[RMDB]
RNA sequence: GGGAACGACUCGAGUAGAGUCGAAAAAGCAGGACCGCGUUACGAGGCGGUCCUGCAGCAAUGAGUAGAAGCGGUCAAAUUUGGUGUCGAGUUCCAACAAACCAAAUUCGGGCAUUGCUCACUGCAAAAAACUCUCUUUAGUUCGCUAAAGAGAGAAGGUACUUUAGACGUUCGCGUCUAAAGUACCAAAAGAAACAACAACAACAAC
Reactivity to 2A3 in 0.01 (KOAc 150mM, MgCl2 10mM, bicine 150mM(pH8.5), 24C), signal-to-noise 1, nucleotides 027 to 156: a000g000c000a000g000g010a000c000c030g020c050g020u090u070a130c160g130a060g070g030c000g000g000u000c000c010u000g010c000a000g010c000a020a010u000g000a010g010u030a020g010a120a000g090c070g080g010u050c000a040a000a000u000u000u030g000g000u090g040u080c140g090a070g060u140u190c110c010a030a040c020a040a050a010c000c000a010a000a000u030u030c050g040g000g000c020a030u000u080g000c000u000c010a030c020u000g000c000a000a030a000a000a080a100c000u000c000u010c000u000u000u000a040g000u030u070c150g000c130u000a000a000a000g000a000g000a000g000a000a010